[RMDB]
RNA sequence: GGGAACGACUCGAGUAGAGUCGAAAAUCACAAUAUACCUUGCAGAUGAUGAAGUAUAUUUUGAUUUGCAUGAUCAUACAGAAUAUGCUGGAAAAGGACACCAAGUUGUUCCUGCUCCUCUUGGUCACAUUAAAUGCAGUUUCGACUGCAUUUAAUGAAAAGAAACAACAACAACAAC
Reactivity to 2A3 in 0.01 (KOAc 150mM, MgCl2 10mM, bicine 150mM(pH8.5), 24C), signal-to-noise 9, nucleotides 027 to 126: u000c000a000c010a020a000u010a000u010a020c020c050u040u130g110c060a070g050a300u230g020a130u090g030a160a000g000u000a010u000a000u000u020u000u010g030a030u010u000u060g020c040a040u070g030a030u040c020a020u070a190c060a040g100a120a070u200a070u180g070c050u060g020g010a030a060a030a030g040g000a010c010a000c040c060a120a030g030u080u020g040u080u060c000c000u010g010c010u010c010c010u020c030u020u050g030g010u050c030a010
Reactivity to DMS in 0.01 (KOAc 150mM, MgCl2 10mM, bicine 150mM(pH8.5), 24C), signal-to-noise 9, nucleotides 027 to 126: u000c010a020c050a030a010u000a010u000a010c020c040u000u010g020c040a150g010a150u010g010a150u010g010a070a050g000u000a000u000a000u000u000u000u000g010a020u000u000u000g010c080a080u010g010a050u010c040a090u010a150c170a100g010a070a130u000a050u000g010c040u000g010g010a060a070a150a070g000g000a040c050a050c040c110a050a050g000u000u000g000u000u000c010c010u000g010c230u000c040c030u000c090u000u000g010g010u010c130a150